[RMDB]
RNA sequence: GGGAACGACUCGAGUAGAGUCGAAAAAUUGAUUACAAACAAGAGGAGGCUGAUGUAGUGACAAACCAUUUCUCAGCAGUAAUUAGUGAUUUCGUAAAAUAAUACUUUCAGGUACACAACGCGCUUAAUACACGCUACUGUUCGCAGUAGCGUGUAUAAAAGAAACAACAACAACAAC
Reactivity to DMS in 0.01 (KOAc 150mM, MgCl2 10mM, bicine 150mM(pH8.5), 24C), signal-to-noise 2, nucleotides 027 to 126: a010u000u000g000a070u020u030a060c070a070a090a100c110a100a070g000a070g010g000a080g000g020c050u000g000a080u020g030u000a020g020u000g020a050c100a040a050a090c120c010a070u020u000u000c040u020c000a030g040c110a100g010u010a060a050u000u010a040g000u000g000a080u030u000u010c100g020u020a060a050a080a100u010a030a080u020a060c080u000u010u000c040a020g010g060u000a040c080a100c100a090a070c120g000c080g000c050u010u000a100
Reactivity to 2A3 in 0.01 (KOAc 150mM, MgCl2 10mM, bicine 150mM(pH8.5), 24C), signal-to-noise 3, nucleotides 027 to 126: a000u060u100g040a000u050u090a060c070a020a160a010c030a110a040g050a030g180g000a030g040g010c020u000g010a090u130g070u070a020g050u000g090a050c120a060a100a020c050c000a030u000u040u020c030u000c000a030g000c050a000g050u040a040a040u060u040a030g040u010g070a060u000u050u070c030g070u060a010a080a040a060u270a080a060u100a080c010u030u120u090c070a030g050g040u050a030c020a000c000a070a120c110g020c000g020c050u010u050a080